[RMDB]
Chemical mapping of a 177-nucleotide RNA with DMS. DMS adducts were read by reverse transcription with MarathonRT. DMS (dimethyl sulfate) methylates the pairing face of unpaired adenines and cytosines.
RNA sequence: GGGAACGACUCGAGUAGAGUCGAAAAGUUCUGCCGGGAUACCGACGGAAUUUCAGACAAGCCAAAGGGUAAUAGCUUUGGUUGACCUACACCGAAAAGGAAAUAGGUGUCGUUGGUUGAGUGAGAAGAUGUACACAGACUUCGGUCUGUGUACAUCAAAAGAAACAACAACAACAAC
Reactivity to DMS in 0.01 (KOAc 150mM, MgCl2 10mM, bicine 150mM(pH8.5), 24C), signal-to-noise 1, nucleotides 027 to 126: g000u000u000c000u000g030c010c000g000g000g000a280u030a160c020c010g060a050c000g000g000a020a070u000u000u000c090a300g000a020c100a170a200g000c000c000a030a000a020g000g000g010u000a100a110u020a300g000c000u000u000u010g010g000u000u000g010a150c040c000u000a020c060a180c000c030g010a030a020a060a050g000g000a070a060a220u010a120g010g030u000g010u000c100g000u000u000g000g010u010u000g000a120g010u020g020a130g080a150a130